The data come from the RNA Mapping Database (RMDB), library OK1LIB. This 177-nucleotide RNA was probed chemically with DMS and 2A3.
[RMDB]
RNA sequence: GGGAACGACUCGAGUAGAGUCGAAAAAGUGCAUAUCAUCCAAAUAUGCCGGGGUCAACUGUUUGCAUAAUGGACUUUUGCGAACAAAAGGGGUUGAGAUUCACAAAUGGAGAGUGGAUGGGUCUCAUGUGUAUGCUUCUUUCGAGAAGCAUACACAAAAAGAAACAACAACAACAAC
Reactivity to DMS in 0.01 (KOAc 150mM, MgCl2 10mM, bicine 150mM(pH8.5), 24C), signal-to-noise 4, nucleotides 027 to 126: a090g040u010g000c030a050u000a020u000c010a130u040c120c170a190a090a070u010a030u000g000c000c000g030g000g020g000u020c130a080a110c210u010g000u010u000u000g000c010a000u020a020a050u050g020g010a300c150u000u000u020u010g020c010g000a000a010c020a020a050a120a230g010g000g010g030u020u010g000a000g000a090u000u010c090a060c150a030a080a110u010g000g000a150g020a120g010u020g000g020a090u010g010g000g000u000c000u010c050a090
Reactivity to 2A3 in 0.01 (KOAc 150mM, MgCl2 10mM, bicine 150mM(pH8.5), 24C), signal-to-noise 4, nucleotides 027 to 126: a000g170u150g040c010a030u030a010u060c090a060u040c040c050a060a190a050u050a000u020g000c010c010g000g000g000g060u110c060a090a040c110u030g000u000u010u000g000c010a000u030a090a070u230g150g060a080c020u060u060u050u050g030c000g030a020a000c010a020a040a030a020g050g010g040g000u100u130g020a030g000a020u100u130c040a010c040a110a110a060u120g020g010a040g010a020g110u120g010g030a090u060g020g020g020u000c010u010c060a040

2A3 is a SHAPE reagent: it acylates the 2'-hydroxyl of flexible nucleotides of all four kinds. The RNA was probed in 150 mM KOAc, 10 mM MgCl2 and 150 mM bicine (pH 8.5) at 24 C.